[RMDB]
RNA sequence: GGGAACGACUCGAGUAGAGUCGAAAAGAUUACGUGGAAUUGUGUAAGCCACGCGUCGUGUUGCUCAUGCUACUCACUGUCAUUGUAGGAAUGUAUUUAGCAGCUCCUGGCUGGGUAAGCUUGCGCAGAGCAUCGUACCGUUCGCGGUACGAUGCUCAAAAGAAACAACAACAACAAC
Reactivity to 2A3 in 0.01 (KOAc 150mM, MgCl2 10mM, bicine 150mM(pH8.5), 24C), signal-to-noise 2, nucleotides 027 to 126: g010a020u010u170a080c030g010u000g000g070a080a100u200u170g040u040g040u270a090a040g000c020c010a010c000g000c000g050u020c010g010u080g040u090u140g000c000u000c050a020u030g020c010u030a010c000u020c030a060c080u100g000u010c040a100u160u250g080u130a060g000g030a060a020u020g020u020a140u130u300u060a050g000c000a000g000c000u000c000c010u030g000g000c030u010g000g000g060u060a110a060g010c000u030u030g000c030g030c040a020
Reactivity to DMS in 0.01 (KOAc 150mM, MgCl2 10mM, bicine 150mM(pH8.5), 24C), signal-to-noise 1, nucleotides 027 to 126: g020a060u000u000a090c040g020u030g010g000a070a100u000u010g030u000g030u010a110a180g000c010c010a010c000g000c300g000u000c050g010u000g000u010u000g010c000u010c110a030u000g020c020u000a030c000u000c010a020c210u020g010u000c040a180u000u010g020u000a050g000g000a080a060u000g010u000a070u000u010u030a150g000c000a020g000c160u000c000c020u000g000g050c080u000g000g000g000u000a060a060g000c000u000u000g020c110g010c050a070
This 177-nucleotide RNA was probed chemically with 2A3 and DMS.
High DMS reactivity at an A or C suggests that its Watson-Crick edge is free.
The RNA was probed in 150 mM KOAc, 10 mM MgCl2 and 150 mM bicine (pH 8.5) at 24 C.
Source: RMDB library OK2TST, as collected in RNAgym.
For DMS the reverse transcriptase was MarathonRT.
For 2A3 the reverse transcriptase was SuperScript II with manganese.
For 2A3, 1,123 sequencing reads were counted.